The record gives the reactivity of an RNA of 207 nucleotides to DMS and 2A3. For 2A3, 2,103 sequencing reads were counted. The DMS profile rests on 4,089 reads. The RNA was probed in 150 mM KOAc, 10 mM MgCl2 and 150 mM bicine (pH 8.5) at 24 C.
[RMDB]
RNA sequence: GGGAACGACUCGAGUAGAGUCGAAAAGGAACCAGAAUAACCUAGUAACCAUGGGAUCAUUGUUACAGGAUCCACAUCCCUAAGAGGAUGUUCCACUGCAGUUUUCAUUUUUCUCUGACUCAAACUCAGUAAGUGGAUUAGAUACAUGCAGGUGAUACCCCAUAAUACCUUUCGAGGUAUUAUGGGGAAAAGAAACAACAACAACAAC
Reactivity to DMS in 0.01 (KOAc 150mM, MgCl2 10mM, bicine 150mM(pH8.5), 24C), signal-to-noise 2, nucleotides 027 to 156: g020g010a080a150c030c010a120g010a130a140u000a090a150c060c020u000a120g030u000a050a090c040c030a110u000g010g030g000a120u010c030a090u000u000g030u000u010a060c050a090g030g010a080u000c010c050a090c000a020u010c010c010c000u020a120a140g010a140g020g020a020u000g010u000u000c010c060a050c030u000g000c000a070g020u010u000u000u000c020a130u010u010u000u000u010c040u000c010u000g010a050c070u000c120a050a050a170c160u010c030a040g020u000a050a030g050u010g000g000a040u010u000a040g010a120u000a030c060a070u000g080c020a050g000g010u010g000a160u000a140
Reactivity to 2A3 in 0.01 (KOAc 150mM, MgCl2 10mM, bicine 150mM(pH8.5), 24C), signal-to-noise 4, nucleotides 027 to 156: g060g010a010a040c040c010a030g110a080a110u150a050a010c000c010u020a060g000u010a000a020c030c010a030u020g000g060g170a130u300c000a000u050u010g000u020u000a010c000a020g010g030a020u040c040c030a030c000a030u010c010c000c010u070a270a050g090a180g050g000a010u020g020u040u020c000c020a050c010u010g010c020a000g010u030u030u080u120c040a050u020u010u030u130u070c060u000c010u050g020a040c000u020c110a080a110a050c060u020c020a030g030u090a130a020g020u070g050g010a020u030u080a010g020a020u060a060c080a070u030g020c020a010g000g050u170g050a040u300a140